An RNA of 177 nucleotides, treated with 2A3 and DMS and read out base by base. Source: RMDB library M2PK50, as collected in RNAgym.
RNA sequence: GGGAACGACUCGAGUAGAGUCGAAAACAUAAACGCUUCGGCGUUUAUGAAAUAAAAUCAGCCGUAAGCUCGCGUAAAAUAUUACCGCUGAACGCGAGCUUAAAACGGGACAGUUCGCUGUCCCGAACAUACCCGUUUAGUUCGCUAAACGGGUAUGAAAAGAAACAACAACAACAAC
Reactivity to 2A3 in 0.01 (KOAc 150mM, MgCl2 10mM, bicine 150mM(pH8.5), 24C), signal-to-noise 3, nucleotides 027 to 126: c000a000u000a000a000a000c000g000c000u020u060c230g140g010c010g000u000u010u000a000u020g000a010a010a000u090a000a060a010a050u120c040a010g090c020c030g070u010a000a000g010c010u000c010g020c000g010u020a000a070a100a070u200a130u110u190a070c000c060g020c090u060g050a010a010c010g000c000g020a000g000c000u000u000a000a000a000a000c010g000g000g000a000c000a010g010u070u100c170g000c180u010g010u000c000c010c000g000a000a000
Reactivity to DMS in 0.01 (KOAc 150mM, MgCl2 10mM, bicine 150mM(pH8.5), 24C), signal-to-noise 4, nucleotides 027 to 126: c000a020u000a000a000a000c000g020c010u000u020c200g040g020c000g010u000u000u010a000u000g000a030a080a080u020a070a050a100a120u010c110a080g000c050c080g000u000a020a020g010c010u000c010g010c010g000u000a050a070a070a090u000a070u000u010a070c110c090g020c100u010g020a120a020c010g010c000g000a020g000c000u000u000a000a020a080a150c030g010g000g000a010c000a000g010u000u010c190g030c000u000g000u000c000c010c000g010a010a100

Reactivities are given for positions 27 through 126.